[RMDB]
RNA sequence: GGGAACGACUCGAGUAGAGUCGAAAAAUCUUGACGUUAUUUUGCCUGGUGAGUUUUCCAAGAAGCAGUUAGGACUGCUCCAACCUACUGACAAUUCUACAACUGUUAGUGUUACUGUAUCCAGUAAAAGGCGGUUUGUUCGCAAACCGCAAAAGAAACAACAACAACAAC
Reactivity to 2A3 in 0.01 (KOAc 150mM, MgCl2 10mM, bicine 150mM(pH8.5), 24C), signal-to-noise 2, nucleotides 027 to 129: a000u000c000u020u080g070a040c030g050u110u070a170u030u010u030u030g060c010c010u000g000g000u060g050a110g010u050u000u070u010c010c000a040a040g040a050a020g010c040a010g040u020u110a010g020g090a000c000u040g000c020u000c060c000a050a070c000c020u090a020c040u000g000a000c000a000a080u040u000c040u200a010c020a140a020c040u000g010u050u020a000g040u010g000u010u010a020c000u050g030u070a060u050c030c020a000g020u030a000a020a060a000g000
Reactivity to DMS in 0.01 (KOAc 150mM, MgCl2 10mM, bicine 150mM(pH8.5), 24C), signal-to-noise 4, nucleotides 027 to 129: a080u050c050u020u050g060a100c110g020u050u090a000u000u000u000u080g100c030c000u020g000g050u030g050a070g070u050u020u070u000c020c060a170a050g050a050a110g000c000a010g000u010u130a110g030g030a130c060u010g050c000u050c040c090a130a050c040c040u120a010c020u000g000a030c020a050a120u000u030c040u040a140c150a030a050c100u000g020u000u080a070g000u040g000u030u080a070c000u020g060u040a200u040c040c050a040g000u000a030a040a070a060g000
The record gives the reactivity of an RNA of 170 nucleotides to 2A3 and DMS. High 2A3 reactivity points to a flexible backbone, as in loops and unpaired stretches. 2A3 adducts were read by reverse transcription with SuperScript II with manganese. For DMS, 5,688 sequencing reads were counted.